[RMDB]
RNA sequence: GGGAACGACUCGAGUAGAGUCGAAAAGAUAUGGAUGAUACUACCCACCGUGAUUCUUAUAAUAGCGCUCGUCGGAAACGACGAGAACUACGCUGAUAUAAGAAUCACGAGGUAUCAUCCUAAGUCACACAUCUCACAUGUUCGCAUGUGAGAUGUGAAAAGAAACAACAACAACAAC
Reactivity to DMS in 0.01 (KOAc 150mM, MgCl2 10mM, bicine 150mM(pH8.5), 24C), signal-to-noise 2, nucleotides 027 to 126: g000a100u000a200u020g000g010a010u010g000a020u000a000c000u000a050c010c030c030a300c110c020g000u000g010a010u000u000c000u000u000a000u000a010a190u000a010g000c010g000c000u000c000g010u000c010g020g000a110a100a290c000g000a010c000g010a000g000a030a000c140u020a300c040g030c010u000g010a010u010a010u000a010a010g000a020a000u000c000a000c000g000a010g000g000u000a000u000c000a010u000c000c000u020a000a030g000u030c100a230
Reactivity to 2A3 in 0.01 (KOAc 150mM, MgCl2 10mM, bicine 150mM(pH8.5), 24C), signal-to-noise 2, nucleotides 027 to 126: g150a120u300a180u300g000g010a000u000g000a000u000a010c010u180a250c050c050c010a010c020c030g000u040g000a030u000u000c010u000u050a070u030a090a220u130a090g000c000g040c040u000c000g030u000c000g020g070a090a110a170c000g020a000c010g000a000g000a000a000c020u140a060c010g000c010u000g100a060u030a000u000a150a020g000a000a000u010c020a000c000g000a000g010g000u000a000u000c010a000u000c000c000u000a010a010g200u130c050a050